[RMDB]
RNA sequence: GGGAACGACUCGAGUAGAGUCGAAAAGAUAUGGAGGGACAUAGGGAGCAAGCGAUCGGAAACGAUCGGCUUGCUUUGAUCUAUGGUUCCCUCCUAAGUCAAAACUCAUAGUGUUCGCACUAUGAGAUCCUAUGGGUAAGUUCGCUUACCCAUAGGAAAAAGAAACAACAACAACAAC
Reactivity to DMS in 0.01 (KOAc 150mM, MgCl2 10mM, bicine 150mM(pH8.5), 24C), signal-to-noise 5, nucleotides 027 to 126: g000a050u000a300u010g000g020a030g010g000g010a060c010a000u000a010g010g000g000a010g020c000a010a010g020c000g000a010u000c000g010g020a160a140a250c010g000a010u000c000g010g020c010u000u000g000c000u000u000u000g000a090u010c010u000a010u000g020g010u010u000c000c000c000u000c000c000u000a000a080g020u000c050a110a110a130a180c000u000c000a010u000a010g010u000g010u000u010c290g030c010a020c000u000a000u000g000a010g000a050
Reactivity to 2A3 in 0.01 (KOAc 150mM, MgCl2 10mM, bicine 150mM(pH8.5), 24C), signal-to-noise 3, nucleotides 027 to 126: g010a020u070a040u190g010g000a010g010g000g000a000c000a010u020a000g050g030g020a060g010c000a010a010g010c010g010a000u010c000g010g020a090a050a050c020g000a000u000c030g070g060c030u000u010g030c000u010u020u010g000a010u000c000u000a000u010g130g000u060u090c000c000c020u010c000c000u000a010a010g000u000c010a050a050a050a090c000u010c000a000u000a000g010u010g070u120u080c300g030c130a000c000u000a000u000g010a000g010a010